[RMDB]
RNA sequence: GGGAACGACUCGAGUAGAGUCGAAAAAUACGGGAGCUUGCCCUUUCCUUUCUGCAUAAAUGCCCUCAUUAGAGGCACUUAUAAAGUCAGGAAGAAAGCACCCACCUGCCAUGGUGCGGGGUUCAAACUGAAGACGUCAUUUCGAUGACGUCUUCAGAAAAGAAACAACAACAACAAC
Reactivity to DMS in 0.01 (KOAc 150mM, MgCl2 10mM, bicine 150mM(pH8.5), 24C), signal-to-noise 2, nucleotides 027 to 126: a060u020a080c230g010g000g000a100g030c000u010u000g050c110c060c010u020u000u000c000c000u000u000u000c000u000g020c300a000u000a000a010a000u000g000c090c020c000u000c090a190u010u040a120g000a050g030g000c000a000c000u000u000a000u000a080a260a030g000u000c010a010g000g000a000a000g030a040a070a010g020c010a060c040c000c000a130c010c000u000g000c010c040a240u010g010g030u100g010c000g010g040g000g000u010u000c110a060a140a200
Reactivity to 2A3 in 0.01 (KOAc 150mM, MgCl2 10mM, bicine 150mM(pH8.5), 24C), signal-to-noise 3, nucleotides 027 to 126: a000u180a050c060g010g000g020a030g020c020u060u070g060c050c000c000u010u030u050c000c000u000u000u000c010u030g000c020a010u000a010a020a000u020g010c020c010c010u080c030a140u040u300a110g020a050g020g000c000a000c000u030u020a010u000a000a030a010g010u000c000a000g010g000a000a000g010a020a010a000g020c010a060c010c010c000a000c000c000u020g070c030c040a300u300g090g020u300g040c010g000g000g000g020u050u110c040a040a090a060
Annotation: Structure probing data (DMS and 2A3) for a 177-nucleotide construct. For 2A3, 1,611 sequencing reads were counted. It was measured as part of the RMDB library RFM100.